[RMDB]
RNA sequence: GGGAACGACUCGAGUAGAGUCGAAAAGACGCCGGUGUACCAGGCGUUGUCCAUCCGGCUCGCGGCGGUGCUGAGCCCGAUCACCGAGAUCGACCCGGAGUCCACGGCCGACGAACUUGCCGCGCAGCACGGAGUGUAGGUUCGCCUACACUCCGUGAAAAGAAACAACAACAACAAC
Reactivity to DMS in 0.01 (KOAc 150mM, MgCl2 10mM, bicine 150mM(pH8.5), 24C), signal-to-noise 5, nucleotides 027 to 126: g000a040c020g040c010c000g010g030u010g010u010a160c070c050a100g010g010c030g000u010u000g000u000c030c030a190u010c080c060g010g010c030u000c010g000c050g020g010c010g000g020u000g010c040u000g000a240g020c050c010c030g000a030u000c080a100c030c040g010a090g000a230u000c180g000a140c060c030c010g020g000a270g010u010c060c070a100c180g000g010c050c040g000a150c150g010a050a030c020u000u010g040c000c010g000c050g010c180a050g010
Reactivity to 2A3 in 0.01 (KOAc 150mM, MgCl2 10mM, bicine 150mM(pH8.5), 24C), signal-to-noise 3, nucleotides 027 to 126: g050a000c000g030c020c000g030g060u110g050u140a300c060c080a080g010g000c020g000u010u010g030u040c010c000a050u030c030c030g020g010c040u060c030g010c010g010g000c010g000g030u030g010c060u050g040a020g030c000c020c000g010a010u070c070a090c190c080g080a080g010a220u150c060g060a180c020c020c020g020g000a010g020u000c030c020a100c060g060g000c000c020g060a090c040g020a040a040c020u060u300g000c000c000g020c010g040c060a010g010

Source information: The data come from the RNA Mapping Database (RMDB), library OK2TRN. The record gives the reactivity of an RNA of 177 nucleotides to DMS and 2A3. Reactivities are rounded to 0.1 and cut off at 0 and 3. The DMS profile rests on 3,834 reads. Values cover nucleotides 27 to 126. 2A3 adducts were read by reverse transcription with SuperScript II with manganese. Conditions: 150 mM KOAc, 10 mM MgCl2 and 150 mM bicine (pH 8.5), 24 C.